[RMDB]
RNA sequence: GGGAACGACUCGAGUAGAGUCGAAAAUCAUCAUCCAAUUCAUCACUAUGCACCAGGUGGCAAGGAAUAGCGUGUAUAUGCUCGCAAUAUCCAUUUUCAUGAGUUUUUACGCCAACUUGAUACGAUUCGCCGUCUAAUGGAUAAAACGCCUCAAAAAACGUCUAGGUAAGUUCGCUUACCUAGACGUAAAAGAAACAACAACAACAAC
Reactivity to DMS in 0.01 (KOAc 150mM, MgCl2 10mM, bicine 150mM(pH8.5), 24C), signal-to-noise 2, nucleotides 027 to 156: u010c070a140u020c000a170u000c030c060a060a140u010u000c080a110u000c070a060c090u000a070u020g070c080a070c030c030a130g090g020u030g000g000c040a070a100g020g000a090a030u010a060g040c030g000u010g010u000a000u000a080u000g000c000u010c020g050c060a070a150u010a070u010c030c000a120u000u000u010u000c050a130u010g000a120g010u000u000u000u000u000a050c030g040c040c030a060a110c090u010u000g010a100u000a030c050g010a160u000u000c050g010c080c040g000u000c020u000a060a040u000g010g010a080u000a050a060a110a080c040g030c070c000u020c020a000a070a070a100a030
Reactivity to 2A3 in 0.01 (KOAc 150mM, MgCl2 10mM, bicine 150mM(pH8.5), 24C), signal-to-noise 3, nucleotides 027 to 156: u070c030a000u000c000a030u000c000c050a010a020u090u070c030a040u050c010a050c090u110a070u130g020c010a040c040c020a020g030g030u040g040g020c040a050a010g010g020a070a070u040a080g020c040g010u040g030u020a060u020a000u300g030c020u030c030g020c040a040a050u060a070u120c020c020a080u070u040u060u100c050a050u170g040a030g050u040u040u060u110u070a040c030g010c020c000a040a050c060u030u090g030a030u040a100c030g050a060u020u090c050g020c050c020g030u000c000u020a130a040u050g040g010a020u070a060a060a030a020c090g020c000c000u020c030a000a170a000a000a010
An RNA of 207 nucleotides, treated with DMS and 2A3 and read out base by base. For DMS, 2,945 sequencing reads were counted. The reactions ran in a buffer of 150 mM KOAc, 10 mM MgCl2 and 150 mM bicine (pH 8.5), at 24 C.